[RMDB]
RNA sequence: GGGAACGACUCGAGUAGAGUCGAAAAUUUCGGGUUUACGACUGCGGGUAAGCCUGCCUUGCUACGUCCGGUGUCCGGGGACGAUCGCCCUGUGGCGGGUCUGAAUGGCAACGGUCCGUUCCCGGCGAUCGCCGCACAACUUCGGUUGUGCGGCGAUAAAAGAAACAACAACAACAAC
Reactivity to 2A3 in 0.01 (KOAc 150mM, MgCl2 10mM, bicine 150mM(pH8.5), 24C), signal-to-noise 2, nucleotides 027 to 126: u060u080u180c040g000g080g080u060u110u090a200c160g030a110c000u040g010c030g010g000g030u050a170a000g000c010c000u000g100c000c000u140u300g060c000u110a000c060g110u000c010c000g050g050u070g010u100c060c080g000g080g000g000a080c000g030a070u020c000g090c000c000c030u130g140u190g040g100c250g000g000g000u030c000u000g240a230a080u130g070g000c010a060a000c040g040g060u030c030c020g000u000u090c000c000c000g030g000c040g000